[RMDB]
RNA sequence: GGGAACGACUCGAGUAGAGUCGAAAAGCGUACUACAGAACCGGAUGCGUUGAAACGAGCCUACCCACCGAUUCCCAAAUAGGAAUCGAGGGCUCGUGGAGCAUCUGGUUCUGUAUCGCAAAAGCUGAAUCGCUCGUUUCGACGAGCGAUUCAGCAACGUUACAGUUAAGUUCGCUUAACUGUAACGAAAAGAAACAACAACAACAAC
Reactivity to 2A3 in 0.01 (KOAc 150mM, MgCl2 10mM, bicine 150mM(pH8.5), 24C), signal-to-noise 3, nucleotides 027 to 156: g020c010g020u070a050c050u000a000c030a000g010a010a000c000c010g020g010a000u000g010c020g170u280u040g010a040a000a000c000g000a000g000c010c020u050a080c060c020c020a020c020c000g020a000u010u060c000c020c030a190a300a090u270a120g010g010a010a010u020c000g000a030g000g000g000c000u000c000g000u040g000g000a020g040c000a020u050c000u000g000g000u000u000c000u000g000u000a000u010c000g000c000a050a100a010a050g010c000u000g000a000a000u010c010g000c000u000c010g040u030u110u140c260g120a050c000g000a010g000c000g000a000u000u000c000a000g000c010a000a000
Reactivity to DMS in 0.01 (KOAc 150mM, MgCl2 10mM, bicine 150mM(pH8.5), 24C), signal-to-noise 2, nucleotides 027 to 156: g000c000g010u030a060c080u010a040c000a030g000a030a020c000c000g010g010a010u010g020c000g010u000u010g030a140a200a040c000g010a020g030c010c000u000a030c040c010c020a300c130c010g000a030u000u000c010c010c010a080a170a220u010a060g010g000a020a010u000c000g000a110g030g000g020c010u000c000g000u000g030g010a300g000c010a020u000c000u000g000g000u000u000c020u000g010u000a010u000c020g010c020a080a050a120a080g010c010u010g010a060a020u000c010g000c000u000c020g000u010u000u020c300g000a080c000g000a010g050c000g020a010u000u010c010a010g020c050a000a030